[RMDB]
RNA sequence: GGGAACGACUCGAGUAGAGUCGAAAAGAUAUGGAGUGGUCUGAGUGCGAAGAACUGUGCUCGGAAACGAGCACAGGGAGCACAUCAGAGCCACUCCUAAGUCAAAACCGGAUGUUCGCAUCCGGAAGAUUCUAUCAAUGUUCGCAUUGAUAGAAUCAAAAGAAACAACAACAACAAC
Reactivity to 2A3 in 0.01 (KOAc 150mM, MgCl2 10mM, bicine 150mM(pH8.5), 24C), signal-to-noise 5, nucleotides 027 to 126: g010a010u060a050u200g010g000a000g010u010g000g010u020c010u020g020a020g020u010g020c030g210a300a030g010a100a020c010u010g000u000g010c000u010c020g010g030a060a060a030c010g000a000g000c000a000c010a000g000g000g010a000g030c030a010c020a210u030c000a000g020a040g000c000c000a000c000u000c000c000u000a000a000g000u000c030a010a010a050a130c010c000g000g000a010u010g040u090u120c300g000c180a000u000c000c000g000g000a000a010
Reactivity to DMS in 0.01 (KOAc 150mM, MgCl2 10mM, bicine 150mM(pH8.5), 24C), signal-to-noise 5, nucleotides 027 to 126: g000a060u010a300u000g010g010a010g020u000g000g000u010c000u000g000a030g000u000g010c000g020a140a190g010a160a190c010u000g010u000g010c000u000c000g010g000a080a090a190c010g010a010g000c000a000c000a000g010g000g000a060g000c000a010c000a070u000c000a020g000a100g020c000c000a000c000u000c010c000u000a020a060g010u000c040a110a060a170a190c000c010g000g010a020u000g010u000u020c290g020c000a020u000c000c010g000g010a050a070